[RMDB]
RNA sequence: GGGAACGACUCGAGUAGAGUCGAAAAUUCUAAGUGCUUCCAAGAUAUGAGUGAAUGCUAUAGAAAUUGCAGGGGAGUCCAAAGGGCUGCGCUUCUCCCGUGGCUCAGUCUUAUUUCAUACCUGCGAAACUCGGGUGAAAUUCGUUUCACCCGAGUUAAAAGAAACAACAACAACAAC
Reactivity to DMS in 0.01 (KOAc 150mM, MgCl2 10mM, bicine 150mM(pH8.5), 24C), signal-to-noise 3, nucleotides 027 to 126: u000u010c010u000a000a070g000u010g000c040u000u000c010c020a170a090g000a240u080a120u080g000a080g000u040g010a030a020u020g030c060u020a130u010a060g000a040a050a080u030u040g010c000a000g010g000g000g000a110g000u030c060c100a080a080a100g010g000g000c010u010g000c130g000c010u010u000c070u020c010c080c040g080u020g020g020c010u000c000a020g000u000c020u010u010a030u050u040u010c000a080u020a240c010c010u020g000c020g020a030
Reactivity to 2A3 in 0.01 (KOAc 150mM, MgCl2 10mM, bicine 150mM(pH8.5), 24C), signal-to-noise 3, nucleotides 027 to 126: u020u000c000u030a010a100g020u010g060c030u010u010c000c010a170a060g130a280u200a170u270g110a050g130u300g060a030a080u120g000c010u010a030u010a140g090a000a060a040u100u120g000c000a010g000g010g000g010a030g070u070c070c040a050a180a000g020g000g000c040u010g010c000g000c000u070u010c040u000c000c000c000g000u010g000g000c000u000c020a000g010u000c010u080u090a210u060u130u010c000a010u020a080c000c000u000g010c000g020a060